[RMDB]
RNA sequence: GGGAACGACUCGAGUAGAGUCGAAAAGGAGGAAGGAACGGGCAACGGUAGGUCAGUAUGCCCCGAAUGUGCUGGGCGACACGCGGGCUACAAUGGCCGAGACAGUGGGAUGCAACGCCGAAAGGCGGCAGCAUCACAGCUUCGGCUGUGAUGCUGCAAAAGAAACAACAACAACAAC
Reactivity to DMS in 0.01 (KOAc 150mM, MgCl2 10mM, bicine 150mM(pH8.5), 24C), signal-to-noise 3, nucleotides 027 to 126: g010g000a080g000g020a100a060g000g000a110a090c130g030g010g010c080a060a080c100g010g020u000a080g010g020u010c020a060g000u000a060u020g010c070c020c010c060g000a060a080u010g020u000g020c060u010g000g000g000c040g000a080c050a030c120g000c140g000g000g010c040u010a030c080a060a080u000g010g010c000c020g010a110g010a040c100a060g010u010g000g000g010a090u010g000c110a100a180c040g010c010c010g010a060a060a150g010g010c000g000
Reactivity to 2A3 in 0.01 (KOAc 150mM, MgCl2 10mM, bicine 150mM(pH8.5), 24C), signal-to-noise 2, nucleotides 027 to 126: g040g030a020g000g040a070a030g020g010a080a050c080g000g000g000c040a030a040c050g000g060u080a040g000g060u050c040a010g020u040a040u180g040c030c010c000c030g050a130a070u170g010u030g060c030u080g030g090g070c040g010a020c010a010c050g040c030g000g020g000c000u010a010c030a060a260u070g000g000c000c020g000a000g010a010c030a000g060u080g000g010g010a000u060g070c030a100a020c030g000c000c010g020a000a020a000g010g000c010g070

This 177-nucleotide RNA was probed chemically with DMS and 2A3. 2A3 adducts were read by reverse transcription with SuperScript II with manganese. For 2A3, 2,255 sequencing reads were counted. Source: RMDB library RFMREP, as collected in RNAgym. For DMS, 2,759 sequencing reads were counted.